Annotation:
An RNA of 177 nucleotides, treated with DMS and 2A3 and read out base by base.

RNA sequence: GGGAACGACUCGAGUAGAGUCGAAAAGUGGUAGCACUUCAACAGGAAAUGACAAUUGUCAAAUGUAAGGGUUUAAAUAAACCUUUCGUGAAGGACAAUGUCAGUUUCGUUGCUGAUGAUUCAGGUACUAGCUCUACAAGUUCGCUUGUAGAGCUAGAAAAGAAACAACAACAACAAC
Reactivity to DMS in 0.01 (KOAc 150mM, MgCl2 10mM, bicine 150mM(pH8.5), 24C), signal-to-noise 2, nucleotides 027 to 126: g010u000g030g020u010a120g020c030a050c020u010u000c010a040a050c070a150g010g010a010a010a020u010g010a010c000a060a100u000u000g000u010c000a120a180a050u000g010u020a020a020g010g000g020u000u000u010a130a100a180u030a040a000a000c000c000u000u010u000c000g010u000g020a150a200g010g010a020c010a010a000u000g010u000c000a020g000u000u000u000c010g010u030u000g000c030u010g010a060u010g010a150u010u000c020a040g010g000u000a170
Reactivity to 2A3 in 0.01 (KOAc 150mM, MgCl2 10mM, bicine 150mM(pH8.5), 24C), signal-to-noise 1, nucleotides 027 to 126: g020u050g030g100u100a020g180c000a010c030u030u030c030a010a000c020a070g010g000a020a020a000u030g000a020c070a100a300u040u000g000u000c000a070a020a040u100g060u190a030a020g030g060g020u000u000u000a300a300a160u300a030a090a040c010c000u040u000u000c000g020u060g070a100a060g160g000a010c000a000a000u010g030u000c000a030g000u040u010u000c030g050u030u020g000c010u010g050a050u100g060a060u100u200c050a030g000g020u010a050
Source: RMDB library 15KREP, as collected in RNAgym. For 2A3, 656 sequencing reads were counted. 2A3 adducts were read by reverse transcription with SuperScript II with manganese. Reactivities are given for positions 27 through 126. The RNA was probed in 150 mM KOAc, 10 mM MgCl2 and 150 mM bicine (pH 8.5) at 24 C.